[RMDB]
RNA sequence: GGGAACGACUCGAGUAGAGUCGAAAAGAAGGUGCUGGAUUAGAUCAAGCUAUUACGUAUUCGUUAGUUUCUAAAGAGGAUGCUACUGCAUUUUCGAUGCAACAGCGUCAAACAAUUGAUUUAUUGACUAUUCACCUAGAUUCGUCUAGGUGAAUAGAAAAGAAACAACAACAACAAC
Reactivity to 2A3 in 0.01 (KOAc 150mM, MgCl2 10mM, bicine 150mM(pH8.5), 24C), signal-to-noise 7, nucleotides 027 to 126: g060a050a020g060g010u050g030c030u030g000g050a090u050u100a070g040a070u070c020a040a020g020c020u060a070u150u150a060c090g050u070a150u040u150c020g030u030u050a080g010u030u060u020c060u080a120a090a010g090a040g090g040a010u010g010c000u030a070c080u040g000c010a010u030u030u040u160c100g010a010u020g000c010a030a020c030a040g010c010g020u030c020a050a060a040c040a050a090u070u080g090a080u040u180u120a090u040u080g020a030
Reactivity to DMS in 0.01 (KOAc 150mM, MgCl2 10mM, bicine 150mM(pH8.5), 24C), signal-to-noise 8, nucleotides 027 to 126: g010a110a070g000g010u000g010c020u000g000g010a110u000u010a080g010a260u010c070a050a050g010c030u000a060u010u000a070c100g020u010a120u000u000c050g010u000u010a160g010u000u000u000c020u010a050a080a120g010a120g010g000a010u000g010c000u000a090c110u000g010c000a010u000u000u010u000c220g010a050u000g000c040a020a080c060a020g010c020g010u000c020a080a070a090c160a040a060u000u000g000a100u000u010u000a080u020u000g010a300
Structure probing data (2A3 and DMS) for a 177-nucleotide construct. Reactivities are given for positions 27 through 126. For 2A3 the reverse transcriptase was SuperScript II with manganese. The DMS profile rests on 11,844 reads. Source: RMDB library OK2TST, as collected in RNAgym.